[RMDB]
RNA sequence: GGGAACGACUCGAGUAGAGUCGAAAAAACAACUUUAAUGUCAUCGGGAUGGUAAUCAAUAUAAGGUGCUAAGUUAGGAUCAUAUGAUUGAGGUUUACGCACCAUGCUAAUGGGUGUUUGCACCAAAAUCAUGCUUACAAUUUCUCGACCUGUAUAAUCAGUUAGCCGGUUUCGACCGGCUAACUGAAAAAGAAACAACAACAACAAC
Reactivity to 2A3 in 0.01 (KOAc 150mM, MgCl2 10mM, bicine 150mM(pH8.5), 24C), signal-to-noise 1, nucleotides 027 to 156: a000a000c190a140a000c160u200u200u260a250a060u270g120u190c050a060u020c000g010g010g010a030u060g040g010u020a020a000u120c130a210a000u110a020u080a140a050g030g000u000g000c000u020a130a000g050u180u030a010g060g110a110u130c040a050u060a060u180g080a040u010u000g050a020g000g130u060u060u160a000c000g000c010a040c000c060a040u060g040c000u280a290a020u110g080g000g000u030g000u000u090u090g010c040a000c000c030a010a010a010a010u000c030a030u040g000c010u110u100a020c030a100a280u000u090u030c060u030c010g000a020c000c010u050g080u160a040u130a110a140